Chemical mapping of a 177-nucleotide RNA with DMS and 2A3. The 2A3 profile rests on 999 reads. The reactions ran in a buffer of 150 mM KOAc, 10 mM MgCl2 and 150 mM bicine (pH 8.5), at 24 C. Source: RMDB library M2PK50, as collected in RNAgym. For 2A3 the reverse transcriptase was SuperScript II with manganese.
RNA sequence: GGGAACGACUCGAGUAGAGUCGAAAACACACAAACUUCGGUUUGUGUGAAAAGUCAGAAGGUAAAACCAAAUAAAAGCGAAAACUGACAAUUAAAACGCAAAAAUCCCAAGGUUCGCCUUGGGAAACAAAGUAAGUGUCUUCGGACACUUACUUUGAAAAGAAACAACAACAACAAC
Reactivity to DMS in 0.01 (KOAc 150mM, MgCl2 10mM, bicine 150mM(pH8.5), 24C), signal-to-noise 2, nucleotides 027 to 126: c010a000c000a000c000a000a000a010c000u000u000c120g040g000u000u000u000g040u000g000u000g000a070a010a140a170g000u010c010a030g040a070a130g020g000u010a060a090a070a270c030c090a050a110a140u040a050a020a090a160g010c060g020a140a020a040a040c000u000g000a020c010a080a120u000u030a030a020a070a080c060g020c040a030a060a080a030a100u000c000c000c010a010a000g010g000u010u000c270g010c020c000u000u020g000g000g000a000a010a060
Reactivity to 2A3 in 0.01 (KOAc 150mM, MgCl2 10mM, bicine 150mM(pH8.5), 24C), signal-to-noise 1, nucleotides 027 to 126: c000a000c010a000c000a000a000a030c020u060u090c150g060g010u000u000u010g010u000g010u000g020a040a000a000a020g000u000c020a030g030a140a020g070g010u150a130a040a090a180c020c030a070a090a020u230a060a120a000a020g040c020g050a090a050a000a040c000u000g030a010c000a010a000u140u080a070a020a000a030c020g010c020a000a180a000a000a190u050c000c000c010a000a000g020g020u010u020c160g120c040c010u000u020g010g010g000a000a000a020